[RMDB]
RNA sequence: GGGAACGACUCGAGUAGAGUCGAAAAGGGGUCAUUAGCUUUCUCGAUUCCAGCAGUCCGAAGAACUCACUGAAGCCUCCACGGUGAGGGAGGACGGGAGCUGGACAGGAUUGACAGCUAAUGACGGAGGCACCCAAAAUCCAGGUUCGCCUGGAAAUCGUUUCAAAUUCUUCGGAAUUUGAAACGAAAAAGAAACAACAACAACAAC
Reactivity to 2A3 in 0.01 (KOAc 150mM, MgCl2 10mM, bicine 150mM(pH8.5), 24C), signal-to-noise 1, nucleotides 027 to 156: g030g010g030g000u000c010a000u010u020a010g000c000u090u130u060c130u160c190g200a200u070u000c010c010a000g000c000a010g000u000c000c020g020a150a030g000a010a010c010u020c000a000c020u020g060a140a000g030c020c000u000c000c000a000c000g000g000u000g000a000g000g020g010a020g000g010a020c000g020g010g030a050g010c000u000g000g020a000c030a070g190g150a200u240u230g080a010c040a000g010c000u000a000a000u020g000a000c020g000g000a000g000g020c000a020c000c000c000a070a050a000a050u000c000c000a000g070g030u050u070c210g080c060c010u070g000g000a000a000a050
Description:
Chemical mapping of a 207-nucleotide RNA with 2A3. 2A3 is a SHAPE reagent: it acylates the 2'-hydroxyl of flexible nucleotides of all four kinds.